[RMDB]
RNA sequence: GGGAACGACUCGAGUAGAGUCGAAAACGCUGGGACCGAAAGAGUCACCCACAGGGAGUUUCAGCCUUCCUGAAGCGCGCACGGGAAGGCUGAAACGACGAUCUGUGGCAAGUCUCUUGGUCCUGUGCUGAAGCGCGCACGGCAACCGAAAGGUGCGGGAACUGUAGAUCUUCGGAUCUACAGUUCCAAAAGAAACAACAACAACAAC
Reactivity to 2A3 in 0.01 (KOAc 150mM, MgCl2 10mM, bicine 150mM(pH8.5), 24C), signal-to-noise 1, nucleotides 027 to 156: c030g040c020u030g000g000g030a000c000c020g160a070a150a030g010a020g030u080c160a300c230c020c030a000c000a000g000g010g000a000g000u010u000u000c000a010g000c000c000u000u010c000c000u000g010a090a090g000c000g000c000g000c020a010c000g000g000g030a010a000g050g000c000u000g000a000a000a000c000g000a000c000g000a000u020c010u000g000u000g030g000c010a270a230g000u000c000u000c000u000u040g000g000u000c000c010u060g010u060g020c040u200g040a030a000g000c000g000c000g010c000a000c000g060g000c010a090a130c010c000g020a090a060a110g000g000u020g020c010g000